[RMDB]
RNA sequence: GGGAACGACUCGAGUAGAGUCGAAAACUUGGAUUGUUCGCAAUCCAAGAAAUCCCAGGGAUCGACUCGAGUAGAGUCGAAAAUCCCACUCAACUCAAACAAAAAGGCACUUGUUCGCAAGUGCCAAUCUGAGUAUACUCUUCGGAGUAUACUCAGAAAAAGAAACAACAACAACAAC
Reactivity to DMS in 0.01 (KOAc 150mM, MgCl2 10mM, bicine 150mM(pH8.5), 24C), signal-to-noise 1, nucleotides 027 to 126: c000u000u000g000g000a010u000u000g040u000u000c250g010c050a000a000u000c000c000a010a010g000a080a160a080u000c000c000c010a090g010g000g000a010u000c000g000a010c000u000c000g000a080g020u000a030g000a000g000u000c010g000a000a010a050a050u000c000c000c000a060c180u000c040a080a020c020u010c090a040a050a100c140a050a020a090a040a110g000g030c000a010c000u000u010g010u020u000c280g020c010a000a000g010u000g000c000c000a000a010
Reactivity to 2A3 in 0.01 (KOAc 150mM, MgCl2 10mM, bicine 150mM(pH8.5), 24C), signal-to-noise 1, nucleotides 027 to 126: c020u000u010g030g000a000u000u000g000u010u050c020g040c100a000a020u000c000c000a000a000g010a060a050a000u000c040c000c010a000g000g000g000a000u100c000g000a000c000u000c010g000a010g040u070a000g040a000g010u010c000g000a000a000a000a000u010c010c000c020a000c020u150c000a030a110c020u040c150a040a090a190c070a070a090a050a030a040g010g010c010a000c000u000u000g020u110u110c160g010c100a020a000g010u000g000c000c000a000a000